[RMDB]
Structure probing data (DMS and 2A3) for a 177-nucleotide construct. It was measured as part of the RMDB library OK1LIB. For 2A3, 1,388 sequencing reads were counted. 2A3 adducts were read by reverse transcription with SuperScript II with manganese.
RNA sequence: GGGAACGACUCGAGUAGAGUCGAAAACGAGAUCACCCUGCUGGUCGACAAGUCACUGGUGAUGGCCGACGACAACAGCGGCCGGACGUGCUAUCGGUUAUGCGAGACGAUGCGCCACUACGCGUUGCCCGUUGGCAUGGUUCGCCAUGCCAACGGGAAAAGAAACAACAACAACAAC
Reactivity to DMS in 0.01 (KOAc 150mM, MgCl2 10mM, bicine 150mM(pH8.5), 24C), signal-to-noise 1, nucleotides 027 to 126: c040g010a300g020a070u000c010a050c000c010c000u070g040c000u000g000g020u000c000g030a070c040a080a020g020u000c050a020c060u060g000g040u040g000a240u000g040g040c060c000g110a020c090g120a050c200a100a170c200a010g000c010g020g000c000c090g000g030a060c020g010u070g000c030u000a140u000c020g000g060u000u000a060u000g010c140g000a020g000a030c060g000a000u000g000c090g020c030c000a090c090u030a020c140g000c010g000u020u000g000
Reactivity to 2A3 in 0.01 (KOAc 150mM, MgCl2 10mM, bicine 150mM(pH8.5), 24C), signal-to-noise 3, nucleotides 027 to 126: c040g000a000g000a050u030c030a070c020c000c000u000g100c060u020g090g000u040c040g050a060c050a050a070g010u100c050a000c090u110g000g070u080g070a120u080g130g000c000c000g000a130c000g000a100c040a120a000c010a150g040c000g040g000c000c000g020g030a020c010g060u150g000c020u070a030u140c000g090g000u060u040a090u230g050c030g030a030g000a030c030g000a050u030g030c000g000c060c040a090c070u170a050c030g000c020g050u010u080g020